Overview: The data come from the RNA Mapping Database (RMDB), library OK2TST. Chemical mapping of a 177-nucleotide RNA with 2A3 and DMS. The RNA was probed in 150 mM KOAc, 10 mM MgCl2 and 150 mM bicine (pH 8.5) at 24 C.

RNA sequence: GGGAACGACUCGAGUAGAGUCGAAAAAGGGAAAUCAUUUCUCGAAUUAUUGAGACCACUUUACAGAGAAAGCGGGACGACCAACUAAACGUCAAUCUAAGGAAUGAUCUGAAUAUUAUGAGUUGGACACUGAUGUCCAAUUCGUUGGACAUCAGUGAAAAGAAACAACAACAACAAC
Reactivity to 2A3 in 0.01 (KOAc 150mM, MgCl2 10mM, bicine 150mM(pH8.5), 24C), signal-to-noise 3, nucleotides 027 to 126: a020g100g030g040a020a090a070u080c090a100u030u030u000c010u000c010g000a050a070u150u050a050u120u190g040a080g030a020c000c020a040c030u060u060u060a100c100a050g150a010g070a090a030a000g000c000g010g010g020a020c040g040a020c060c000a050a010c000u070a100a080a000c040g040u020c040a010a020u010c040u090a070a080g090g030a130a080u080g010a030u010c030u080g060a110a000u130a080u270u100a080u170g050a040g040u030u000g030g020a010
Reactivity to DMS in 0.01 (KOAc 150mM, MgCl2 10mM, bicine 150mM(pH8.5), 24C), signal-to-noise 3, nucleotides 027 to 126: a150g000g000g000a050a080a150u010c140a080u000u010u000c020u000c020g010a060a110u020u000a080u010u000g000a070g010a060c040c040a030c070u000u010u000a140c210a080g000a090g010a030a060a100g010c010g000g020g000a130c120g020a140c050c040a020a080c090u000a040a100a160c090g010u000c020a050a120u000c040u000a090a140g020g000a040a050u010g000a020u010c040u020g010a070a090u010a060u020u000a080u010g010a040g010u000u000g000g000a210